[RMDB]
RNA sequence: GGGAACGACUCGAGUAGAGUCGAAAAAUGCCAUAAGAAGGUCAACAGAAUCCAAGAAGUUGAUGACCAGCCUCUCAAUUGACACACCAUGGGGUGCAAUUAAUGUGGAGUCGACUUACAAGCCAACCGUAACCAGCAAAUUCGUUUGCUGGUUACGAAAAGAAACAACAACAACAAC
Reactivity to 2A3 in 0.01 (KOAc 150mM, MgCl2 10mM, bicine 150mM(pH8.5), 24C), signal-to-noise 7, nucleotides 027 to 126: a000u060g010c010c000a040u090a160a030g250a050a070g030g020u080c060a050a030c000a100g140a130a070u050c040c030a100a070g070a040a010g040u050u060g020a070u050g070a110c010c020a010g090c000c000u060c000u000c040a000a090u050u130g090a070c000a010c010a040c030c060a120u180g190g050g010g000u010g020c010a010a010u050u110a130a060u180g060u100g040g000a020g020u010c010g010a020c010u010u130a070c080a070a020g040c030c040a020a000c020
Reactivity to DMS in 0.01 (KOAc 150mM, MgCl2 10mM, bicine 150mM(pH8.5), 24C), signal-to-noise 3, nucleotides 027 to 126: a050u000g010c050c020a080u030a100a130g010a130a070g000g010u050c040a040a050c070a050g010a060a050u040c120c070a090a150g000a060a040g000u000u000g010a090u020g000a100c040c030a100g000c040c000u010c020u000c090a120a060u000u020g000a170c060a080c030a080c050c080a080u020g000g000g000g000u000g000c010a030a010u000u000a060a120u000g000u000g000g020a300g010u010c010g000a050c010u010u000a080c110a050a100g000c050c070a060a020c210
An RNA of 177 nucleotides, treated with 2A3 and DMS and read out base by base. Values cover nucleotides 27 to 126. The DMS profile rests on 4,255 reads. For 2A3 the reverse transcriptase was SuperScript II with manganese. Conditions: 150 mM KOAc, 10 mM MgCl2 and 150 mM bicine (pH 8.5), 24 C.